[RMDB]
Structure probing data (2A3 and DMS) for a 177-nucleotide construct. The reactions ran in a buffer of 150 mM KOAc, 10 mM MgCl2 and 150 mM bicine (pH 8.5), at 24 C.
RNA sequence: GGGAACGACUCGAGUAGAGUCGAAAAUCAUAGUCAUCAAUGCGAAUGCAAUGCGAGCGAUCCACAUAUUCAAAAAAUGGUAGAAGUUCAGCAAUUCAGGGAUCGUCGAAUGGCUGAAAAACUAUUAGGUACUUAGGGUUUUCGAACCCUAAGUACCAAAAGAAACAACAACAACAAC
Reactivity to 2A3 in 0.01 (KOAc 150mM, MgCl2 10mM, bicine 150mM(pH8.5), 24C), signal-to-noise 1, nucleotides 027 to 126: u060c000a030u110a060g060u020c000a040u020c040a090a060u170g060c040g170a270a010u180g000c030a000a080u100g080c020g000a030g040c010g000a010u000c000c020a040c040a120u180a110u000u130c090a090a070a000a000a050a070u050g100g000u050a070g020a270a050g050u040u050c020a010g010c020a050a190u000u040c000a010g000g000g130a040u030c010g020u030c000g040a070a000u030g030g000c000u000g000a020a000a020a030a020c100u180a120u270u160a070
Reactivity to DMS in 0.01 (KOAc 150mM, MgCl2 10mM, bicine 150mM(pH8.5), 24C), signal-to-noise 1, nucleotides 027 to 126: u000c040a090u000a050g090u040c030a010u010c100a080a050u000g010c070g020a100a070u010g030c080a060a160u000g000c010g000a120g000c010g000a150u010c000c000a190c130a110u000a020u000u000c190a000a060a050a040a040a120u000g030g040u000a010g000a130a180g000u010u000c030a000g000c000a030a030u000u000c020a060g040g000g030a060u010c010g010u000c140g030a070a030u000g000g000c000u000g000a090a040a110a040a060c080u000a030u000u000a050
Annotation: It was measured as part of the RMDB library OK2TST. Values cover nucleotides 27 to 126.